The record gives the reactivity of an RNA of 177 nucleotides to DMS and 2A3. The 2A3 profile rests on 28,986 reads. For 2A3 the reverse transcriptase was SuperScript II with manganese. For DMS, 44,933 sequencing reads were counted. Reactivities are rounded to 0.1 and cut off at 0 and 3. The RNA was probed in 150 mM KOAc, 10 mM MgCl2 and 150 mM bicine (pH 8.5) at 24 C. For DMS the reverse transcriptase was MarathonRT. It was measured as part of the RMDB library OK2TST.

RNA sequence: GGGAACGACUCGAGUAGAGUCGAAAAAGUAACCCAGCUAGUCGUCGUUGUCGCGUCGAACCACAUGGUGAACUGUGCGGCGGGUGCAUUUUGCACAUCAAGUGGGCGCUGAUUGGGAAGAUUUACCACUUACCAACAUAUUCGUAUGUUGGUAAGUAAAAGAAACAACAACAACAAC
Reactivity to DMS in 0.01 (KOAc 150mM, MgCl2 10mM, bicine 150mM(pH8.5), 24C), signal-to-noise 9, nucleotides 027 to 126: a060g010u010a110a170c010c000c000a050g010c050u000a040g010u010c020g030u000c010g020u010u010g030u000c040g010c020g010u000c050g010a110a060c030c020a190c220a130u010g010g010u000g010a080a090c140u010g010u000g010c010g020g010c030g000g010g010u000g010c010a110u000u000u010u010g020c020a030c010a070u010c080a080a130g020u010g010g010g010c040g010c020u000g000a060u000u000g010g000g010a080a090g000a130u000u000u000a180c040c040
Reactivity to 2A3 in 0.01 (KOAc 150mM, MgCl2 10mM, bicine 150mM(pH8.5), 24C), signal-to-noise 9, nucleotides 027 to 126: a000g070u040a030a030c000c000c020a010g000c030u040a010g070u270c030g000u000c030g090u080u140g040u050c020g000c010g040u060c030g060a070a030c020c010a110c040a300u270g020g000u040g060a100a060c050u070g020u040g040c000g020g000c000g030g020g000u020g010c020a030u160u240u200u260g000c010a020c000a050u100c060a070a110g110u170g120g070g000c010g000c010u030g020a130u020u020g020g010g010a070a040g050a090u070u050u070a080c020c010